Structure probing data (2A3 and DMS) for a 207-nucleotide construct.
The reactions ran in a buffer of 150 mM KOAc, 10 mM MgCl2 and 150 mM bicine (pH 8.5), at 24 C.
Source: RMDB library M2RFPK, as collected in RNAgym.
High 2A3 reactivity points to a flexible backbone, as in loops and unpaired stretches.
For DMS the reverse transcriptase was MarathonRT.
RNA sequence: GGGAACGACUCGAGUAGAGUCGAAAAUAACACUGGCGGCUGCGUAUCACUCUAGGGUACGUGAUAGUGCGACAUAAGAAGCACUGGUACAUGCCGGCAGGGACAGUUAAGAGAUGGCCGCAGUCUCAAAAGGGGUCAUUCUUCGGAAUGACCCCAAACAUUCUGUCUUCUUCGGAAGACAGAAUGUAAAAGAAACAACAACAACAAC
Reactivity to 2A3 in 0.01 (KOAc 150mM, MgCl2 10mM, bicine 150mM(pH8.5), 24C), signal-to-noise 2, nucleotides 027 to 156: u060a030a010c020a030c030u080g130g040c000g000g040c000u030g000c020g000u040a020u020c020a070c200u150c080u160a120g060g000g040u010a000c000g020u030g070a090u080a050g000u010g000c010g060a020c070a080u300a110a060g080a140a010g010c000a000c020u020g030g000u110a070c040a070u150g000c000c010g010g010c000a010g000g000g020a030c030a100g010u040u090a090a010g020a000g020a020u020g040g000c030c010g040c050a000g000u020c000u030c030a070a070a000a000g000g010g020g000u000c000a010u000u000c000u010u040c150g010g010a000a000u000g000a000c000c060c000c000a000a000
Reactivity to DMS in 0.01 (KOAc 150mM, MgCl2 10mM, bicine 150mM(pH8.5), 24C), signal-to-noise 2, nucleotides 027 to 156: u000a080a060c020a060c030u000g000g000c040g020g020c000u020g000c010g020u000a050u000c000a110c140u000c170u010a180g050g000g030u000a020c000g030u000g010a130u010a010g020u010g010c020g010a160c110a170u010a160a130g000a130a300g000c010a020c040u000g010g040u000a090c080a110u000g010c000c000g010g030c000a030g000g000g040a070c060a080g060u000u000a070a140g010a080g020a070u010g010g050c070c060g010c080a220g000u010c010u000c010a050a020a090a120g000g020g060g040u000c000a010u000u000c020u000u000c300g030g000a030a000u000g010a010c010c020c000c000a010a000
The DMS profile rests on 3,554 reads.